[RMDB]
RNA sequence: GGGAACGACUCGAGUAGAGUCGAAAAACCAUUAUGUUCGCAUAAUGGUAAAAAAGAUAUGGACGGUCUACUGCUCGAGGAUCUCACGUCGGAAACGACGUGAGGGAGAGCAGUAGCCGUCCUAAGUCAAAAAUACUAGGUAUUCGUACCUAGUAAAACUUAAACAAUGGUUCGCCAUUGUUUAAGUAAAAGAAACAACAACAACAAC
Reactivity to DMS in 0.01 (KOAc 150mM, MgCl2 10mM, bicine 150mM(pH8.5), 24C), signal-to-noise 1, nucleotides 027 to 156: a080c000c000a010u000u000a030u010g000u000u000c300g070c020a020u000a010a010u010g010g020u000a000a010a090a060a050a110g020a080u000a290u000g020g000a010c010g000g020u000c000u020a020c000u000g060c000u000c010g030a130g000g000a070u000c000u000c000a000c000g000u000c010g010g020a230a070a300c020g020a020c000g000u000g000a010g010g010g010a090g000a020g020c000a030g010u010a010g000c000c000g030u000c000c000u000a000a030g000u010c040a020a060a080a070a180u010a010c000u000a010g020g020u000a050u000u000c280g050u000a020c000c000u000a000g000u000a000a020a080
Reactivity to 2A3 in 0.01 (KOAc 150mM, MgCl2 10mM, bicine 150mM(pH8.5), 24C), signal-to-noise 2, nucleotides 027 to 156: a000c000c010a000u000u000a000u000g030u020u060c240g010c130a000u000a000a000u000g010g000u030a080a000a010a020a000a040g060a020u090a030u070g010g000a000c010g000g030u110c030u020a000c000u010g010c000u020c030g090a270g010g010a010u000c000u000c010a000c000g000u000c010g060g020a050a070a090c010g000a000c010g000u000g000a000g000g000g000a020g000a000g000c000a000g000u000a000g000c010c000g000u000c000c000u000a000a000g000u000c000a000a000a000a000a120u060a010c000u000a000g000g010u020a020u020u120c260g060u070a010c000c000u000a000g000u020a000a010a000
The data come from the RNA Mapping Database (RMDB), library RNAMAK. Chemical mapping of a 207-nucleotide RNA with DMS and 2A3. The reactions ran in a buffer of 150 mM KOAc, 10 mM MgCl2 and 150 mM bicine (pH 8.5), at 24 C. For 2A3, 4,373 sequencing reads were counted. For 2A3 the reverse transcriptase was SuperScript II with manganese.